RNA sequence: GGGAACGACUCGAGUAGAGUCGAAAAUCAUGCACGUUCGCGUGCAUGAAAAGGCGGCGAGUAUCGCUCAGCGGCGCGCUACAGGGCGCAGCGCAGCUGGAAAAAGAUGAAUCUUCGGAUUCAUCAACUAUCUAUGUAACUUCGGUUACAUAGAUAGAAAAGAAACAACAACAACAAC
Reactivity to 2A3 in 0.01 (KOAc 150mM, MgCl2 10mM, bicine 150mM(pH8.5), 24C), signal-to-noise 9, nucleotides 027 to 126: u020c000a000u000g000c000a000c000g020u050u050c200g020c000g090u010g000c000a000u000g000a000a010a000a010g060g010c040g010g000c060g070a060g050u110a080u210c030g010c030u030c030a000g000c000g030g000c010g000c000g000c020u090a130c090a170g210g070g000c030g000c030a070g000c140g000c040a060g000c010u040g030g050a060a070a010a010a020g010a000u000g000a000a000u000c020u040u080c230g080g000a000u000u000c000a000u000c000a000a010
Reactivity to DMS in 0.01 (KOAc 150mM, MgCl2 10mM, bicine 150mM(pH8.5), 24C), signal-to-noise 9, nucleotides 027 to 126: u000c000a010u000g010c000a010c000g020u000u010c200g030c010g030u000g000c000a000u000g000a010a050a110a140g010g010c030g000g010c040g010a150g010u010a060u000c040g010c020u000c020a040g010c010g000g010c040g010c020g010c020u010a110c230a140g010g010g010c100g020c030a060g010c020g000c010a070g010c010u000g000g000a050a070a070a110a080g000a010u000g000a010a010u000c000u000u010c190g020g010a010u000u000c000a000u000c000a070a150

Chemical mapping of a 177-nucleotide RNA with 2A3 and DMS. Values cover nucleotides 27 to 126. The 2A3 profile rests on 46,952 reads. The DMS profile rests on 32,365 reads.